This 177-nucleotide RNA was probed chemically with DMS and 2A3.

[RMDB]
RNA sequence: GGGAACGACUCGAGUAGAGUCGAAAAAGCAUAGUCUCAUGUUCCACAGCAGGCUCCCCAGAACACCUGAACCGUGGCCUCUGGAAGGUCGACACCCAAAGGGAGAUUCUGUAUCAGCUAGGAAGAAAGCAUAGGGAUCAUUCGUGAUCCCUAUGCUAAAAGAAACAACAACAACAAC
Reactivity to DMS in 0.01 (KOAc 150mM, MgCl2 10mM, bicine 150mM(pH8.5), 24C), signal-to-noise 2, nucleotides 027 to 126: a000g000c050a080u000a110g030u060c000u010c040a100u040g020u000u010c000c010a100c130a050g000c160a080g010g030c040u000c010c020c000c020a100g000a070a050c110a070c060c020u020g000a010a070c100c140g000u030g000g020c040c020u010c040u000g010g010a080a070g080g010u000c050g000a150c070a030c050c020c020a060a090a050g000g060g010a040g010a060u050u020c000u000g050u030a080u020c110a070g010c090u020a090g000g030a160a050g010a030a060
Reactivity to 2A3 in 0.01 (KOAc 150mM, MgCl2 10mM, bicine 150mM(pH8.5), 24C), signal-to-noise 3, nucleotides 027 to 126: a000g110c050a090u090a040g010u020c020u030c030a090u110g020u000u070c030c020a040c010a010g060c030a010g030g020c010u000c000c000c000c030a060g010a060a010c070a020c040c000u060g010a090a050c000c040g050u030g010g050c000c000u010c000u100g150g020a150a060g030g000u000c060g040a010c000a050c010c110c010a060a070a050g010g000g000a050g030a090u080u090c010u040g060u070a160u120c010a020g020c020u080a100g040g080a050a090g020a170a140

The RNA was probed in 150 mM KOAc, 10 mM MgCl2 and 150 mM bicine (pH 8.5) at 24 C. DMS adducts were read by reverse transcription with MarathonRT. Source: RMDB library OK1LIB, as collected in RNAgym. 2A3 adducts were read by reverse transcription with SuperScript II with manganese. High 2A3 reactivity points to a flexible backbone, as in loops and unpaired stretches. For DMS, 2,777 sequencing reads were counted.